RNA sequence: GGGAACGACUCGAGUAGAGUCGAAAAGCGUAAAAAGCCCAAAUAAAAUUAAACGCAAACAACGUUAAAUUCGCUCCUGCUUACGCUAAAGCUGCGUAAGUUCAGUUGAGCCUGAAAUUUAAGUCAUACUAUCUAGCUUAAUUUUCGGUCAUUUUUGCAGAUUACAUCUCUUCGGAGAUGUAAUCUGAAAAGAAACAACAACAACAAC
Reactivity to DMS in 0.01 (KOAc 150mM, MgCl2 10mM, bicine 150mM(pH8.5), 24C), signal-to-noise 1, nucleotides 027 to 156: g000c070g040u020a040a090a100a190a190g020c050c010c110a040a040a120u010a060a060a030a060u010u000a090a080a090c000g040c040a110a200a130c050a040a050c000g010u000u000a050a050a140u000u000c030g040c000u000c010c020u010g000c020u010u020a020c020g000c030u010a140a180a110g020c250u000g050c020g000u000a050a230g000u010u010c000a070g030u000u000g010a210g050c070c000u000g040a020a000a060u000u000u000a000a060g040u000c040a060u000a300c110u000a100u000c110u000a170g010c010u020u000a010a030u000u000u000u000c040g000g000u050c070a260u000u000u000u000u000g040
Reactivity to 2A3 in 0.01 (KOAc 150mM, MgCl2 10mM, bicine 150mM(pH8.5), 24C), signal-to-noise 2, nucleotides 027 to 156: g000c000g030u100a040a200a090a060a160g030c000c020c070a040a240a110u240a050a100a010a020u210u170a130a090a000c000g000c090a110a040a080c040a130a030c070g060u110u060a070a130a110u280u170c050g000c000u000c000c000u010g060c000u010u000a000c000g020c000u100a240a180a000g230c150u020g000c010g000u000a000a010g000u010u020c010a020g040u070u080g010a000g000c000c000u030g010a020a010a010u040u010u000a000a010g020u030c020a070u120a220c060u110a090u300c080u080a030g060c000u000u000a000a010u020u010u010u000c020g020g070u040c100a100u030u030u020u110u190g060
Chemical mapping of a 207-nucleotide RNA with DMS and 2A3. For DMS, 1,395 sequencing reads were counted. The RNA was probed in 150 mM KOAc, 10 mM MgCl2 and 150 mM bicine (pH 8.5) at 24 C. The 2A3 profile rests on 537 reads. DMS adducts were read by reverse transcription with MarathonRT. It was measured as part of the RMDB library ARCHII.